[RMDB]
RNA sequence: GGGAACGACUCGAGUAGAGUCGAAAAAAAGUCAAAGACGCACUUUCCUAGUCCAAUAAGUGUAAAAUUCAUGGCUGACAAUUUAGGAAAUGGAUAUGACAACCCUAAUUCAUUUUGGGAAGAUGCUAAAACUAAGAAACGGACAUAUAGUGCAAUGUGAUACAGAACUGUUCGCAGUUCUGUAUCAAAAAGAAACAACAACAACAAC
Reactivity to DMS in 0.01 (KOAc 150mM, MgCl2 10mM, bicine 150mM(pH8.5), 24C), signal-to-noise 2, nucleotides 027 to 156: a050a040a060g010u010c050a110a100a100g050a150c090g020c000a020c040u010u000u000c020c010u000a120g010u000c070c020a090a130u000a050a090g030u010g010u000a070a010a050a100u010u010c040a110u000g010g010c030u000g000a200c050a040a090u000u000u000a100g010g000a030a040a040u000g050g000a070u000a080u000g030a090c030a050a140c040c000c000u000a110a030u010u010c080a130u000u000u020u000g000g000g000a070a070g000a110u000g000c030u000a060a050a070a050c090u000a090a060g020a120a050a110c050g030g020a030c020a100u000a130u000a070g040u000g020c090a090a050u000g000
Reactivity to 2A3 in 0.01 (KOAc 150mM, MgCl2 10mM, bicine 150mM(pH8.5), 24C), signal-to-noise 3, nucleotides 027 to 156: a010a000a000g040u030c050a090a050a020g070a070c050g000c000a010c000u000u010u020c020c010u000a020g030u000c020c020a060a110u130a190a090g040u040g040u170a150a130a040a030u160u120c030a030u080g070g000c030u030g010a010c050a090a110u110u160u120a090g000g040a030a090a020u050g050g000a030u060a060u160g040a030c040a020a070c020c030c000u060a080a040u050u070c110a020u140u100u080u040g030g010g000a040a010g010a040u040g000c020u050a020a040a100a080c040u060a060a020g050a100a090a010c020g010g030a000c020a010u090a020u050a050g030u010g020c020a000a020u160g020
The record gives the reactivity of an RNA of 207 nucleotides to DMS and 2A3. For DMS, 3,306 sequencing reads were counted. Reactivities are rounded to 0.1 and cut off at 0 and 3.